RNA sequence: GGGAACGACUCGAGUAGAGUCGAAAAUUUAGUGAUUCAAAACUCGGCACCACAGAGGUUAAAGUGAGUGCUUUGAAAACAGCCGGCGUUGUGACAGGUAAUGUUGUAAAACAGUGUUGCACUGCUGAAACAUAGGUCUUCGGACCUAUGAAAAGAAACAACAACAACAAC
Reactivity to 2A3 in 0.01 (KOAc 150mM, MgCl2 10mM, bicine 150mM(pH8.5), 24C), signal-to-noise 4, nucleotides 027 to 129: u160u180u150a090g020u040g120a120u070u060c050a010a030a020a090c030u030c010g050g000c000a000c010c000a000c000a060g180a080g040g200u130u190a110a040a090g060u030g040a150g010u020g010c010u090u060u160g050a070a020a000a030c040a010g020c000c000g000g010c090g010u020u000g050u000g040a030c020a050g030g030u120a150a080u100g000u000u000g050u080a040a010a090a000c020a060g040u040g030u050u050g020c010a030c110u020g000c020u000g000a090a080a000
Reactivity to DMS in 0.01 (KOAc 150mM, MgCl2 10mM, bicine 150mM(pH8.5), 24C), signal-to-noise 7, nucleotides 027 to 129: u030u030u030a090g040u020g030a100u020u020c020a040a070a080a100c090u020c100g000g000c040a040c020c020a010c040a040g030a100g010g010u040u000a060a100a130g030u010g000a120g030u000g020c030u000u000u000g000a040a040a080a050c080a110g020c070c040g000g000c050g000u010u010g030u040g020a030c030a050g010g020u000a050a040u010g020u010u040g000u000a030a050a030a050c050a060g000u000g000u040u020g030c040a050c070u030g000c040u000g030a090a100a160

Description
Source: RMDB library 15KLIB, as collected in RNAgym. Chemical mapping of a 170-nucleotide RNA with 2A3 and DMS. The DMS profile rests on 43,673 reads. The reactions ran in a buffer of 150 mM KOAc, 10 mM MgCl2 and 150 mM bicine (pH 8.5), at 24 C. For 2A3 the reverse transcriptase was SuperScript II with manganese. DMS adducts were read by reverse transcription with MarathonRT.